[RMDB]
Record summary: An RNA of 177 nucleotides, treated with 2A3 and DMS and read out base by base.
RNA sequence: GGGAACGACUCGAGUAGAGUCGAAAAAGUUUCUCGACCCUUUGACUUAGGAUUAGUCAGUUCUAUUUCUCGAUGGGGCGGGGAAGGGAUAUAACUCAGCGGUAGAGUGUCACCUUGACGUGGUGGAUAUCCCACUCACGUUCGCGUGAGUGGGAUAAAAAGAAACAACAACAACAAC
Reactivity to 2A3 in 0.01 (KOAc 150mM, MgCl2 10mM, bicine 150mM(pH8.5), 24C), signal-to-noise 3, nucleotides 027 to 126: a000g110u120u060u000c070u050c100g240a300c000c000c030u100u080u120g010a020c000u050u020a010g040g030a040u050u020a050g120u120c030a000g000u020u040c050u040a130u000u040u000c070u030c060g140a160u160g000g000g000g050c020g010g010g000g010a000a040g030g030g000a000u010a010u020a220a040c060u010c010a000g100c010g200g000u120a030g020a030g080u090g150u050c000a020c060c010u010u090g030a050c040g010u030g000g000u000g020g030a030
Reactivity to DMS in 0.01 (KOAc 150mM, MgCl2 10mM, bicine 150mM(pH8.5), 24C), signal-to-noise 2, nucleotides 027 to 126: a090g030u000u000u000c000u000c050g010a160c060c000c010u000u020u000g000a030c100u000u000a050g030g010a060u030u010a100g010u030c120a160g000u000u020c020u010a020u000u000u000c080u010c220g000a070u000g000g000g030g010c070g000g000g000g020a030a010g030g020g010a070u040a070u020a090a110c040u000c030a110g000c090g040g030u030a100g000a050g000u070g010u000c010a040c010c020u000u010g030a100c100g000u020g020g010u020g010g010a140
About this RNA
The RNA was probed in 150 mM KOAc, 10 mM MgCl2 and 150 mM bicine (pH 8.5) at 24 C. The DMS profile rests on 3,792 reads. The data come from the RNA Mapping Database (RMDB), library OK1LIB. 2A3 adducts were read by reverse transcription with SuperScript II with manganese. Values cover nucleotides 27 to 126.